[RMDB]
RNA sequence: GGGAACGACUCGAGUAGAGUCGAAAAGACGCUGGCCAAGCCGCUGCAGCUGGAUCUCGAGCGCGCCAUGGAGUUAUGUGCGCCCGACGAAUGCGUCGAGGUGACCCCGGAGAUCGUGCGGAUCCGCAUGGAAAACACAUUUCGAUGUGUUUUCCAUAAAAGAAACAACAACAACAAC
Reactivity to DMS in 0.01 (KOAc 150mM, MgCl2 10mM, bicine 150mM(pH8.5), 24C), signal-to-noise 6, nucleotides 027 to 126: g010a060c040g010c010u000g010g000c030c040a090a120g020c040c030g020c110u000g010c090a120g020c020u000g000g000a130u010c050u000c020g000a080g010c050g010c040g010c030c120a110u000g000g000a090g000u000u010a070u010g020u000g010c020g020c000c010c010g010a030c100g010a130a090u000g010c030g010u000c010g000a110g030g010u010g010a130c040c020c010c040g010g000a120g010a060u000c060g020u000g010c040g010g000a100u000c030c030g010c180
Reactivity to 2A3 in 0.01 (KOAc 150mM, MgCl2 10mM, bicine 150mM(pH8.5), 24C), signal-to-noise 5, nucleotides 027 to 126: g030a010c020g010c030u070g010g030c020c010a100a050g030c030c010g120c120u100g030c040a030g010c020u080g030g030a060u000c040u020c050g060a050g020c050g000c000g000c030c020a060u120g100g060a180g100u230u190a120u140g070u070g040c010g000c000c000c010g010a030c040g030a160a080u200g070c000g020u010c010g000a080g020g020u070g040a100c020c010c010c000g010g000a100g000a040u100c030g040u130g040c030g010g010a050u010c020c010g060c040
The data come from the RNA Mapping Database (RMDB), library OK2TST. Structure probing data (DMS and 2A3) for a 177-nucleotide construct. The 2A3 profile rests on 7,482 reads. The reactions ran in a buffer of 150 mM KOAc, 10 mM MgCl2 and 150 mM bicine (pH 8.5), at 24 C.